[RMDB]
Record summary:
Source: RMDB library OK3TST, as collected in RNAgym. This 207-nucleotide RNA was probed chemically with 2A3.
RNA sequence: GGGAACGACUCGAGUAGAGUCGAAAACACAGCAGCUUGUAGUCGGGCCACGCGUCGGCCUCGGCGCCCGCGAUCGGCUCCAGGUUGUCCGCGGUGCAGUUGACUUCCACGUCGCAGGAGGUCGCGUGCUGCGCGGGCGCGCGCAGCGCCACGCGCGGUAGUAUGCACACUUCGGUGUGCAUACUACAAAAGAAACAACAACAACAAC
Reactivity to 2A3 in 0.01 (KOAc 150mM, MgCl2 10mM, bicine 150mM(pH8.5), 24C), signal-to-noise 1, nucleotides 027 to 156: c180a010c000a020g120c050a010g030c000u030u180g130u290a030g010u020c020g070g000g000c100c020a100c010g020c000g040u120c120g010g030c000c000u010c030g010g040c050g010c010c000c020g020c050g000a170u120c010g030g020c070u000c070c070a060g020g070u150u090g050u050c010c020g000c040g080g030u100g000c040a160g010u210u260g060a030c080u030u000c030c010a040c060g260u210c120g070c140a070g010g030a000g030g000u000c000g000c010g040u030g000c050u050g000c030g000c000g010g000g050c000g040c000g020c000g030c020a020g040c080g010c000c000a030c010g090c000g000c010g010
High 2A3 reactivity points to a flexible backbone, as in loops and unpaired stretches.
The RNA was probed in 150 mM KOAc, 10 mM MgCl2 and 150 mM bicine (pH 8.5) at 24 C.